[RMDB]
RNA sequence: GGGAACGACUCGAGUAGAGUCGAAAAAGCACCCUUUUAGAGGUGUGACGGCGUGCCUUUUGUAGAAUGAGCCAGCGAGUUGCUGGCCGUCGGCGAGGUUAAGCUGGAAAGCGAGCCGGAGCGAAAGGUAGCAACGUCCAUUCGUGGACGUUGCUACAAAAGAAACAACAACAACAAC
Reactivity to 2A3 in 0.01 (KOAc 150mM, MgCl2 10mM, bicine 150mM(pH8.5), 24C), signal-to-noise 2, nucleotides 027 to 126: a000g000c000a010c020c000c000u050u170u000u220a120g060a120g000g000u000g000u010g070a040c000g010g000c040g030u120g000c000c000u020u060u090u110g120u050a110g000a130a190u030g000a040g040c000c000a000g000c020g010a170g210u250u300g070c000u000g000g000c000c000g000u000c000g000g000c010g000a030g080g010u030u080a060a010g010c030u000g080g000a140a010a000g000c000g000a000g000c000c000g070g020a050g010c050g080a160a000a000g000
Reactivity to DMS in 0.01 (KOAc 150mM, MgCl2 10mM, bicine 150mM(pH8.5), 24C), signal-to-noise 1, nucleotides 027 to 126: a130g000c000a020c000c000c000u000u050u070u050a090g040a080g000g000u000g000u000g000a210c020g020g000c050g020u000g000c020c000u000u040u070u000g000u030a080g020a070a080u040g000a180g000c000c000a030g000c000g020a090g090u050u020g000c000u000g000g000c000c000g020u010c000g010g020c030g010a090g020g030u000u000a040a190g040c030u010g000g060a080a100a020g000c000g000a100g000c000c030g010g000a300g000c120g010a060a090a050g010